RNA sequence: GGGAACGACUCGAGUAGAGUCGAAAAACCGUGAGUGGAACCCUCGAUCCUUUAUUGGGGGGUACACUCGAGGAGUGGAAGGCGGGGAGGAGGGGGCUGAGGGCUAACCUACGGAAAUUCCUGAGCUCCGUAUAUAUAAGUUCGCUUAUAUAUACGGAAAAGAAACAACAACAACAAC
Reactivity to 2A3 in 0.01 (KOAc 150mM, MgCl2 10mM, bicine 150mM(pH8.5), 24C), signal-to-noise 1, nucleotides 027 to 126: a000c000c020g030u040g100a000g010u020g010g050a070a030c000c010c010u020c000g030a150u150c010c040u190u290u250a180u190u200g030g000g020g000g010g060u010a010c000a000c010u010c000g030a070g010g020a070g020u300g020g100a120a080g130g100c030g040g050g000g010a100g000g020a060g070g040g020g020g110c070u040g030a020g000g000g040c000u030a060a060c020c000u030a000c010g000g020a060a130a060u020u000c000c010u020g030a030g010c010u000
Structure probing data (2A3) for a 177-nucleotide construct. Reactivities are rounded to 0.1 and cut off at 0 and 3. Source: RMDB library 15KREP, as collected in RNAgym.